RNA sequence: GGGAACGACUCGAGUAGAGUCGAAAAGGAGCCAUGGGAUGCUUCUCCCGAUUCCGUCCAACCCUUCCCCAGGAGGGUCGCCCAGGAAUGGCGGGAACUCCACUCUUCGGAGUCCGCGUUCCAUUCUCCUUCAAUACAUGUUCGCAUGUAUUGAAGGAAAAGAAACAACAACAACAAC
Reactivity to 2A3 in 0.01 (KOAc 150mM, MgCl2 10mM, bicine 150mM(pH8.5), 24C), signal-to-noise 4, nucleotides 027 to 126: g040g000a050g010c060c050a120u170g030g030g030a020u080g040c020u060u070c020u030c020c010c010g000a070u110u000c020c050g060u020c060c030a070a070c040c010c000u010u020c020c000c020c000a020g080g000a030g030g000g010u000c030g010c020c010c010a020g000g060a030a010u060g300g040c010g030g000g030a070a050c000u000c010c000a060c030u300c090u300u280c170g000g010a000g010u010c000c000g010c000g000u010u000c010c000a010u100u030c030u000
Reactivity to DMS in 0.01 (KOAc 150mM, MgCl2 10mM, bicine 150mM(pH8.5), 24C), signal-to-noise 2, nucleotides 027 to 126: g010g000a020g010c160c160a070u000g000g040g000a140u000g000c050u010u000c060u010c010c020c000g000a090u000u000c020c020g030u000c030c060a120a090c030c010c020u000u000c000c060c090c140a140g000g010a070g010g000g020u000c030g010c010c010c010a150g000g010a020a010u010g020g010c030g000g000g000a060a050c000u000c000c010a150c300u010c160u000u010c120g000g000a040g030u010c020c040g020c010g010u000u000c000c010a120u000u000c030u000